RNA sequence: GGGAACGACUCGAGUAGAGUCGAAAAGAUAUGGACCCAUGGGUCCGUAGUGGCGUUGAAAAUACUAUUGGCUCGGAAACGAGCCAAUAGUAUUGGAGCCAUCACGGUCCCCAUGGGUCCUAAGUCACAGAAGCUAUAACUUCGGUUAUAGCUUCUGAAAAGAAACAACAACAACAAC
Reactivity to DMS in 0.01 (KOAc 150mM, MgCl2 10mM, bicine 150mM(pH8.5), 24C), signal-to-noise 2, nucleotides 027 to 126: g000a030u020a300u000g000g000a020c000c000c000a010u000g010g010g000u010c010c000g050u010a020g020u000g020g000c010g000u000u020g040a180a120a020a020u000a010c000u000a000u000u000g000g000c000u000c010g000g000a100a120a290c010g000a010g000c000c020a000a000u000a000g010u000a000u000u010g000g010a090g010c020c000a000u010c060a040c000g020g000u010c300c020c010c010a010u000g020g000g000u000c010c000u010a000a080g010u000c030a230

This 177-nucleotide RNA was probed chemically with DMS. The data come from the RNA Mapping Database (RMDB), library TTRINS. The RNA was probed in 150 mM KOAc, 10 mM MgCl2 and 150 mM bicine (pH 8.5) at 24 C.